[RMDB]
RNA sequence: GGGAACGACUCGAGUAGAGUCGAAAAAGCUUUUAGAGUAAGACGUAUAAAAGCUAUGUUCAGGAACUGGUUGCCAUACCAAGCCAACAUUUGGGCUAAAAGUACUGUCUUUUACAUUACGAUGUUACCUCAUUAGGACGUUCGCGUCCUAAUGAGGAAAAGAAACAACAACAACAAC
Reactivity to 2A3 in 0.01 (KOAc 150mM, MgCl2 10mM, bicine 150mM(pH8.5), 24C), signal-to-noise 1, nucleotides 027 to 126: a000g020c030u020u010u050u130a130g030a050g140u100a060a000g020a030c010g000u030a030u030a120a110a020a000g010c010u010a000u060g020u000u100c060a060g060g000a020a010c010u020g030g010u020u120g220c090c040a110u170a030c000c040a000a000g030c010c000a010a000c020a060u050u170u260g120g000g030c020u030a030a030a030a080g040u030a060c080u130g050u030c000u020u110u010u000a080c070a070u000u100a030c080g120a050u150g030u120u070a060
Reactivity to DMS in 0.01 (KOAc 150mM, MgCl2 10mM, bicine 150mM(pH8.5), 24C), signal-to-noise 1, nucleotides 027 to 126: a110g010c030u000u020u010u010a030g020a150g070u030a040a130g010a060c020g010u000a100u000a060a060a290a020g060c000u000a030u000g020u000u010c150a160g010g000a070a070c060u000g000g020u000u000g050c140c180a040u000a030c020c020a060a060g020c030c000a030a030c090a060u000u020u010g010g030g000c010u000a020a060a010a100g000u000a020c040u000g000u000c000u000u000u010u000a030c030a060u000u020a050c190g000a070u000g010u010u000a150